[RMDB]
RNA sequence: GGGAACGACUCGAGUAGAGUCGAAAACGCCGUUGAGCAUCCAUGAUGUUGGCAAAGCGCUCUGGCAUCUCAGGUUCGCGUCCUGUUGCCUCGCAGAUAGUGUCAGCGAACUUAACUGGAAGCGCAGGCCCAUUGGGGAAUUCGUUCCCCAAUGGGCAAAAGAAACAACAACAACAAC
Reactivity to 2A3 in 0.01 (KOAc 150mM, MgCl2 10mM, bicine 150mM(pH8.5), 24C), signal-to-noise 1, nucleotides 027 to 126: c060g030c000c010g120u100u240g100a020g040c020a000u000c030c060a080u170g040a010u070g120u150u050g020g000c030a120a100a000g010c020g020c010u000c020u000g010g040c030a080u000c070u000c110a020g050g000u020u020c010g000c010g040u010c010c000u080g040u040u030g020c040c080u070c100g000c000a040g000a180u100a030g140u190g050u150c060a030g030c000g040a020a000c020u000u060a010a030c030u040g000g040a090a030g000c040g030c040a020g000
Reactivity to DMS in 0.01 (KOAc 150mM, MgCl2 10mM, bicine 150mM(pH8.5), 24C), signal-to-noise 1, nucleotides 027 to 126: c300g100c000c000g030u010u000g000a040g050c020a090u000c020c130a200u010g000a100u000g020u030u000g030g010c030a060a180a060g000c030g010c020u010c000u000g020g010c090a050u000c180u000c140a080g000g000u000u020c060g000c010g000u000c010c000u000g040u000u000g010c100c110u010c260g020c030a090g010a080u000a000g010u000g010u000c010a170g000c040g010a030a000c010u000u000a070a150c080u000g000g000a070a060g000c050g010c070a120g000
Record summary: The record gives the reactivity of an RNA of 177 nucleotides to 2A3 and DMS. Conditions: 150 mM KOAc, 10 mM MgCl2 and 150 mM bicine (pH 8.5), 24 C. 2A3 adducts were read by reverse transcription with SuperScript II with manganese. The data come from the RNA Mapping Database (RMDB), library OK2TST. DMS (dimethyl sulfate) methylates the pairing face of unpaired adenines and cytosines. Values cover nucleotides 27 to 126.